Background:
The record gives the reactivity of an RNA of 177 nucleotides to 2A3 and DMS. Conditions: 150 mM KOAc, 10 mM MgCl2 and 150 mM bicine (pH 8.5), 24 C.

RNA sequence: GGGAACGACUCGAGUAGAGUCGAAAAUAAUGCUACGUAUAGCCGUACGGCAUAUGCUACGAUUAGCUAAUCGGCCGAUCGCGGCAUGCAUAUGCAUUAUACGUAAUAUAUCGUAUAUAAUCGCGUACAAUCGCUCUUGGUUCGCCAAGAGCGAUUGAAAAGAAACAACAACAACAAC
Reactivity to 2A3 in 0.01 (KOAc 150mM, MgCl2 10mM, bicine 150mM(pH8.5), 24C), signal-to-noise 3, nucleotides 027 to 126: u060a000a020u030g010c000u000a000c030g040u030a000u020a100g000c000c000g010u020a030c020g030g000c020a020u030a030u100g000c010u040a060c170g300a260u300u070a030g010c020u010a030a150u120c080g090g010c000c020g010a060u160c150g040c010g000g000c000a000u000g000c000a000u040a030u300g020c010a000u000u000a020u010a000c030g030u000a150a010u070a030u030a020u190c020g040u020a060u000a000u020a140a130u140c040g000c030g060u010a040
Reactivity to DMS in 0.01 (KOAc 150mM, MgCl2 10mM, bicine 150mM(pH8.5), 24C), signal-to-noise 2, nucleotides 027 to 126: u010a060a010u010g020c010u000a110c120g010u000a040u000a090g010c060c030g040u000a140c050g000g000c000a010u010a130u000g010c000u000a060c300g010a210u010u000a040g010c020u000a130a120u000c240g010g010c000c000g000a090u010c110g030c010g020g010c010a000u000g010c010a040u000a040u020g020c020a010u010u000a010u000a010c020g000u040a050a090u010a060u010a030u010c130g000u000a300u010a010u010a090a060u000c150g030c060g010u000a200
The data come from the RNA Mapping Database (RMDB), library OK2TRN.